[RMDB]
RNA sequence: GGGAACGACUCGAGUAGAGUCGAAAAACCGAUAUUCGUAUCGGUAGCUCCUAAGUCUCGGGAGGACCAUCGUACAGGGAGCUUAUCGGAAACGAUAAGCAUCGAUCUGUAUUGGUCCAUCGAUCGAGAUAUGGAAAGAGGGCCCUUUCGAGGGCCCGUUCUCGCAAGCUUUCGAGCUUGCGAGAACAAAAGAAACAACAACAACAAC
Reactivity to 2A3 in 0.01 (KOAc 150mM, MgCl2 10mM, bicine 150mM(pH8.5), 24C), signal-to-noise 1, nucleotides 027 to 156: a010c030c000g010a020u030a030u050u170c300g040u070a000u000c000g000g020u020a030g060c040u020c020c000u040a210a100g010u000c020u000c000g000g000g010a000g010g000a010c000c000a020u120c130g030u020a020c020a020g000g000g020a040g000c000u000u000a000u000c000g060g100a050a070a000c020g000a000u000a000a000g000c030a140u110c010g050a090u040c010u000g020u020a020u020u100g010g010u000c010c010a030u030c020g040a110u040c010g020a000g000a040u010a080u000g110g060a090a110a050g260a240g040g010g000c010c020c110u090u110u140c270g170a030g000g010g020c000c020c010